The record gives the reactivity of an RNA of 177 nucleotides to 2A3 and DMS. For 2A3, 1,805 sequencing reads were counted. Reactivities are given for positions 27 through 126. The reactions ran in a buffer of 150 mM KOAc, 10 mM MgCl2 and 150 mM bicine (pH 8.5), at 24 C. It was measured as part of the RMDB library OK1LIB.
RNA sequence: GGGAACGACUCGAGUAGAGUCGAAAAGAGAAAAAGAAAAGGACCACUCCUGCGGGAGUUAAGGCUCUACGGACAGCCGGGUCCAUAGCCGAAAAAGAAAAAGAAAAAGAAAAAGAAAAAGAAAGAACAUAUGAUGGAGUUUCGACUCCAUCAUAUGAAAAGAAACAACAACAACAAC
Reactivity to 2A3 in 0.01 (KOAc 150mM, MgCl2 10mM, bicine 150mM(pH8.5), 24C), signal-to-noise 2, nucleotides 027 to 126: g100a000g020a010a120a040a000a010g150a050a060a000a030g030g000a010c000c000a000c020u000c000c000u040g000c300g060g000g010a000g000u030u110a090a000g000g000c000u000c010u050a030c080g020g030a020c010a010g010c000c000g050g000g000u000c000c000a000u030a000g010c010c000g080a050a030a060a040a010g120a030a050a050a020a000g100a010a070a000a020a020g110a060a090a000a030a000g070a020a090a030a000a020g100a030a050a010g060a050a010
Reactivity to DMS in 0.01 (KOAc 150mM, MgCl2 10mM, bicine 150mM(pH8.5), 24C), signal-to-noise 3, nucleotides 027 to 126: g000a250g020a060a100a100a100a080g010a050a040a100a170g000g000a010c020c010a100c000u010c000c000u010g050c190g000g020g020a020g000u000u030a080a040g000g010c000u000c060u020a040c020g000g000a090c060a100g030c030c000g000g000g000u000c000c000a030u030a120g000c030c000g010a090a090a040a070a050g020a040a040a060a110a120g000a050a050a000a070a120g020a020a020a040a130a090g000a010a030a030a050a130g010a080a100a100g020a120a150

For DMS, 3,299 sequencing reads were counted.